An RNA of 207 nucleotides, treated with DMS and 2A3 and read out base by base. For DMS, 2,595 sequencing reads were counted. The RNA was probed in 150 mM KOAc, 10 mM MgCl2 and 150 mM bicine (pH 8.5) at 24 C.
RNA sequence: GGGAACGACUCGAGUAGAGUCGAAAAGAUAUGGAACUUGUCAGAGCUAGACAGGCUUGGACCUUCGCUCGGAAACGAGCGAAGCUAGCCUGUCGAAGCUCUUGGAUUUAGUUCCUAAGUCAAAAUGAAUGGCCAUGAUUCGUCAUGGCCAUUCAAACGUUGUAGUGAGGUUCGCCUCACUACAACGAAAAGAAACAACAACAACAAC
Reactivity to DMS in 0.01 (KOAc 150mM, MgCl2 10mM, bicine 150mM(pH8.5), 24C), signal-to-noise 1, nucleotides 027 to 156: g020a120u010a290u020g020g000a010a020c010u000u010g020u010c000a040g010a040g050c010u000a300g010a010c000a000g030g000c020u000u010g050g010a120c260c010u000u010c000g050c010u000c000g000g000a140a130a200c030g010a020g020c030g040a000a020g000c030u000a040g000c040c000u010g020u000c010g000a090a100g030c010u000c010u000u000g000g020a080u000u000u000a040g010u010u000c000c000u000a040a150g010u000c010a070a070a130a120u000g000a050a020u000g010g000c000c020a000u010g000a040u000u000c300g020u000c000a000u000g130g000c000c010a000u000u000c000a000a030a100
Reactivity to 2A3 in 0.01 (KOAc 150mM, MgCl2 10mM, bicine 150mM(pH8.5), 24C), signal-to-noise 2, nucleotides 027 to 156: g030a000u060a060u150g010g000a000a000c000u000u030g010u030c000a000g000a000g020c000u040a020g000a010c000a000g000g020c010u140u200g020g090a160c020c020u000u000c000g000c000u000c000g000g010a050a050a020c020g010a000g000c020g000a000a000g080c000u010a000g010c000c000u000g000u000c000g000a000a000g010c000u010c000u010u000g000g000a000u120u120u220a010g000u000u000c010c000u000a080a020g060u050c010a000a010a010a280u080g010a000a000u000g000g020c000c000a000u000g020a030u020u170c300g030u010c110a000u000g040g000c000c000a000u000u000c000a000a000a010